[RMDB]
RNA sequence: GGGAACGACUCGAGUAGAGUCGAAAACUAGUAAGGGUUCUUCGGCUUGGGACGGAAUAAUCGGAGGUAUAUCGCAGGAUAUGCAGAUUGUAUGAUUCUGACUUUGACUCUAUUAUCAACUAUGACACAUCUGGUAGAUAAGAAUCCGGGUGUUCGGAUUUUCUUCACGUUUCGACGUGAAGAAAAUAAAAGAAACAACAACAACAAC
Reactivity to DMS in 0.01 (KOAc 150mM, MgCl2 10mM, bicine 150mM(pH8.5), 24C), signal-to-noise 1, nucleotides 027 to 156: c010u000a100g010u010a130a180g010g000g000u000u000c020u000u000c030g040g030c020u010u010g000g050g020a100c020g020g010a070a090u010a090a070u000c080g060g000a040g040g030u010a060u000a060u010c050g040c080a140g020g010a050u000a050u000g000c020a110g010a120u000u020g010u000a050u000g010a060u000u030c030u010g030a140c100u020u010u000g010a110c030u000c000u000a080u000u010a110u030c020a010a100c060u000a080u010g010a080c070a050c030a030u000c050u000g000g040u010a090g010a110u000a080a200g010a150a090u000c000c010g040g000g070u000g020u000u000c030g030g000
Reactivity to 2A3 in 0.01 (KOAc 150mM, MgCl2 10mM, bicine 150mM(pH8.5), 24C), signal-to-noise 2, nucleotides 027 to 156: c060u060a050g120u250a180a050g040g020g000u030u030c020u000u040c030g000g000c010u010u060g040g000g040a020c050g010g060a100a070u180a100a030u110c080g020g040a030g030g010u050a030u020a010u050c040g020c030a010g070g050a020u030a000u170g000c020a030g050a180u030u100g020u020a120u050g080a080u050u060c000u010g150a140c030u010u050u110g020a040c010u000c030u040a070u120u110a090u160c030a000a120c070u060a090u300g040a020c040a000c010a100u020c000u000g020g020u050a060g070a220u130a220a050g070a050a040u080c000c000g000g020g000u000g020u000u040c070g010g000